[RMDB]
Source information: The record gives the reactivity of an RNA of 207 nucleotides to 2A3 and DMS.
RNA sequence: GGGAACGACUCGAGUAGAGUCGAAAAUUUUUCGUUUAAAUCGAGCUAUUAAACAAGAAGCCGAAGCUAAACGAGCACUAAUGAAAUCUCUUUAUCUUUGCCUUCAUGUAAUCAACGCAUUAGAAGCUAUUCGUUUUUACGUAUCUUUCGCAUGUACAUACCUGAACCUUUUCGAAGGUUCAGGUAUAAAAGAAACAACAACAACAAC
Reactivity to 2A3 in 0.01 (KOAc 150mM, MgCl2 10mM, bicine 150mM(pH8.5), 24C), signal-to-noise 3, nucleotides 027 to 156: u050u060u010u050u040c020g010u010u060u100a050a060a030u120c060g000a010g010c010u030a020u120u170a170a120a050c080a050a120g060a030a000g010c030c030g010a020a010g010c030u030a010a010a010c050g020a010g040c070a040c110u110a080a060u100g080a140a070a140u030c020u000c000u010u100u040a050u020c030u040u040u050g020c000c010u030u030c010a040u060g040u100a070a070u100c050a050a070c040g000c010a030u030u070a050g010a070a010g040c080u060a040u080u070c030g020u000u010u010u120u090a040c020g030u040a150u130c010u000u020u060c060g000c060a020u150g060u130a030c180
Reactivity to DMS in 0.01 (KOAc 150mM, MgCl2 10mM, bicine 150mM(pH8.5), 24C), signal-to-noise 2, nucleotides 027 to 156: u000u000u000u000u000c030g040u000u000u010a050a080a120u000c000g010a060g010c040u010a170u010u000a050a080a150c020a050a130g010a030a020g040c090c040g000a050a010g020c030u000a010a020a070c130g000a050g000c280a230c080u010a150a140u000g020a060a110a080u010c010u010c010u010u000u000a030u020c020u000u000u000g020c030c050u000u020c020a090u020g050u000a040a080u020c090a060a120c030g050c040a020u000u010a100g010a100a080g020c060u000a070u010u020c090g010u080u020u010u000u020a040c010g000u000a070u000c080u000u010u000c050g060c070a110u000g020u000a130c190
For 2A3 the reverse transcriptase was SuperScript II with manganese.